[RMDB]
RNA sequence: GGGAACGACUCGAGUAGAGUCGAAAAGCUUAGGAUGGGAUUACAAUGAUUUUCAUGAGCCUUCCAAUUGGGGCGAUGAUAAUCACAUUCAAAGCCUAUGUGAGAGGUUCAGGGUCACUUUGUAGUACCAGUGAAGGAUGUUCGCAUCCUUCACUGGAAAAGAAACAACAACAACAAC
Reactivity to DMS in 0.01 (KOAc 150mM, MgCl2 10mM, bicine 150mM(pH8.5), 24C), signal-to-noise 2, nucleotides 027 to 126: g040c070u000u000a100g000g020a080u000g010g000g000a050u000u000a030c030a090a080u000g000a030u000u000u030u000c030a110u010g010a090g030c000c000u000u000c040c070a060a170u010u000g020g010g000g010c010g000a250u000g000a040u000a060a120u030c240a080c170a100u000u000c030a030a030a300g020c000c010u000a060u010g040u010g000a050g000a030g000g000u000u000c000a060g000g010g000u000c030a020c170u000u010u000g020u000a020g000u000a130
Reactivity to 2A3 in 0.01 (KOAc 150mM, MgCl2 10mM, bicine 150mM(pH8.5), 24C), signal-to-noise 1, nucleotides 027 to 126: g020c020u040u110a040g090g010a090u080g010g060g050a070u030u080a060c060a010a050u050g030a050u030u010u030u230c150a130u020g030a000g020c000c000u150u000c060c060a070a130u160u190g050g000g020g000c000g010a010u000g000a020u060a060a120u160c040a000c000a090u100u020c000a020a000a010g000c020c000u040a070u080g130u060g020a120g000a010g030g000u010u030c020a000g000g000g040u000c000a020c130u090u110u110g100u040a050g000u000a080